[RMDB]
RNA sequence: GGGAACGACUCGAGUAGAGUCGAAAAAACAUUUCUGUAUGGAUCAAACAACAGAAACAAAAAAAGGUUCAUCACCAACUGUCUGCUAGGAACAAGCCUCUCUGGUAAGAGAGUGAUGAAGGCGGUCCAAACACAACUUCUUCGGAAGUUGUGUUUGAAAAGAAACAACAACAACAAC
Reactivity to DMS in 0.01 (KOAc 150mM, MgCl2 10mM, bicine 150mM(pH8.5), 24C), signal-to-noise 2, nucleotides 027 to 126: a070a020c110a190u000u000u000c000u000g010u000a110u020g010g010a120u000c250a150a060a160c060a030a050c020a010g000a010a010a030c130a010a010a060a120a090a070a070g010g030u020u020c050a040u010c020a010c050c020a280a050c070u000g000u000c040u000g000c070u010a090g010g010a030a070c120a080a050g010c100c050u000c000u010c020u000g020g020u000a020a020g000a010g020a060g010u010g000a060u000g020a020a030g020g000c040g010g010u010c070
Reactivity to 2A3 in 0.01 (KOAc 150mM, MgCl2 10mM, bicine 150mM(pH8.5), 24C), signal-to-noise 1, nucleotides 027 to 126: a020a000c030a040u010u030u000c000u000g060u040a300u110g050g100a160u230c130a130a110a060c030a000a040c010a050g020a080a020a020c050a040a100a000a020a000a000a000g100g030u050u000c020a040u050c010a020c050c000a100a070c020u050g020u110c030u030g000c000u040a020g060g100a120a070c080a070a090g010c000c040u000c000u020c030u000g050g020u070a100a010g010a000g000a020g070u000g010a070u010g040a010a040g030g090c020g010g010u010c000